[RMDB]
RNA sequence: GGGAACGACUCGAGUAGAGUCGAAAAGAUAUGGAUGUGCAUAAGGGAGAGCUGUGUCGGAAACGACACUGCUCUUUGAUCUUAUGCAUCCUAAGUCAAAAGUAGGGAUUCUUCGGAAUCCCUACAACAGUAUAGAGAGGUUCGCCUCUCUAUACUGAAAAGAAACAACAACAACAAC
Reactivity to DMS in 0.01 (KOAc 150mM, MgCl2 10mM, bicine 150mM(pH8.5), 24C), signal-to-noise 6, nucleotides 027 to 126: g000a030u000a220u010g000g000a060u010g020u010g020c030a020u000a010a010g010g010g010a020g010a010g010c000u000g000u000g010u000c000g020g000a080a060a120c000g020a010c000a010c000u000g000c000u000c000u000u000u020g010a080u010c000u000u000a010u000g010c010a010u000c000c000u000a050a190g010u000c020a100a110a140a200g010u000a010g000g010g000a020u000u000c010u000u010c260g020g000a010a000u000c000c000c000u000a000c000a030a110
Reactivity to 2A3 in 0.01 (KOAc 150mM, MgCl2 10mM, bicine 150mM(pH8.5), 24C), signal-to-noise 4, nucleotides 027 to 126: g020a010u050a010u100g020g010a040u090g080u120g190c010a000u020a020a010g040g050g040a080g030a000g000c020u020g000u000g000u000c000g000g000a020a030a020c000g000a000c000a000c000u000g000c000u000c010u020u040u020g000a010u000c010u000u010a010u030g000c000a000u000c000c000u010a060a020g040u030c050a040a040a100a190g010u010a000g000g000g000a000u010u010c030u040u180c300g120g010a040a000u000c000c000c000u000a000c000a000a000